[RMDB]
RNA sequence: GGGAACGACUCGAGUAGAGUCGAAAAGACCUGGUCGAACUGUCCUUCGAAACGGUAAUCGCGAACGAAGUCGACGAACUCGCCCAGGGUGGGGAGGAAGGUCGAAUCGCUGCCGCCGAUCGACACCCUGCCCUCUACUGUUCGCAGUAGAGGGCAGAAAAGAAACAACAACAACAAC
Reactivity to 2A3 in 0.01 (KOAc 150mM, MgCl2 10mM, bicine 150mM(pH8.5), 24C), signal-to-noise 2, nucleotides 027 to 126: g050a020c010c010u000g070g000u020c010g020a040a050c080u140g010u020c030c000u040u000c050g040a120a110a090c040g000g060u190a160a170u300c090g020c020g060a090a060c020g000a040a020g060u170c070g020a010c020g000a080a040c000u000c030g030c020c010c030a050g080g040g010u120g000g000g000g000a080g040g020a110a080g140g010u000c030g040a080a100u010c000g030c050u110g140c060c070g050c010c020g000a030u000c010g000a010c000a070c040c030
Reactivity to DMS in 0.01 (KOAc 150mM, MgCl2 10mM, bicine 150mM(pH8.5), 24C), signal-to-noise 2, nucleotides 027 to 126: g010a160c030c020u000g010g020u010c000g030a010a040c190u000g000u000c000c000u000u000c000g000a040a300a060c010g000g000u000a140a130u020c060g000c000g000a280a250c040g000a020a070g000u000c200g000a000c000g000a040a130c120u010c050g010c030c010c000a110g030g020g030u000g020g000g000g000a090g000g000a110a110g020g000u000c000g000a030a050u000c010g020c030u000g010c220c100g030c070c020g000a050u000c010g000a020c040a110c090c030
Conditions: 150 mM KOAc, 10 mM MgCl2 and 150 mM bicine (pH 8.5), 24 C. An RNA of 177 nucleotides, treated with 2A3 and DMS and read out base by base. Source: RMDB library OK2TST, as collected in RNAgym.